[RMDB]
RNA sequence: GGGAACGACUCGAGUAGAGUCGAAAAGCUGAGUUUUGAUGGUAUCAUGCAUCAAAGACUGAGUAGUCAUCCUCAGUCACUCAGCCUGGUCAGUAUUCCUCUAUGGAUGACUACAUAGAGACUGAUGCAUGAUACCAUCAGUGAAUACUGACGUUGACGAUGCAUGAAAGUUCGCUUUCAUGCAUCGAAAAGAAACAACAACAACAAC
Reactivity to 2A3 in 0.01 (KOAc 150mM, MgCl2 10mM, bicine 150mM(pH8.5), 24C), signal-to-noise 4, nucleotides 027 to 156: g020c000u010g010a000g040u050u070u120u050g000a000u000g000g000u000a000u000c010a000u010g000c010a010u010c010a060a170a110g170a200c090u140g050a040g030u000a000g000u000c000a010u000c000c000u040c040a020g100u050c040a010c010u000c000a000g000c000c010u100g050g010u010c000a000g000u010a020u010u010c020c020u040c090u120a110u190g000g010a000u000g010a000c000u000a010c000a040u200a060g160a010g020a060c060u040g010a000u010g000c000a000u000g000a000u000a000c000c000a000u000c000a000g000u000g000a000a000u010a020c010u020g000a010c030g020u010u020g010a020
Reactivity to DMS in 0.01 (KOAc 150mM, MgCl2 10mM, bicine 150mM(pH8.5), 24C), signal-to-noise 2, nucleotides 027 to 156: g020c010u010g010a050g010u000u010u000u010g020a040u000g010g020u000a040u000c060a020u010g000c000a030u000c000a070a120a120g020a260c050u000g030a120g010u010a030g010u010c040a060u000c020c000u010c100a040g020u000c120a050c040u030c040a040g000c020c010u000g010g010u000c010a030g000u000a040u000u000c030c020u010c090u010a130u010g000g010a070u000g000a080c000u010a040c020a220u000a160g000a170g010a180c130u010g010a040u000g070c030a050u010g030a030u000a020c050c000a000u020c000a000g040u020g000a020a050u000a000c010u000g010a050c020g000u010u010g000a210

An RNA of 207 nucleotides, treated with 2A3 and DMS and read out base by base. For 2A3, 4,105 sequencing reads were counted. The DMS profile rests on 3,199 reads. The RNA was probed in 150 mM KOAc, 10 mM MgCl2 and 150 mM bicine (pH 8.5) at 24 C.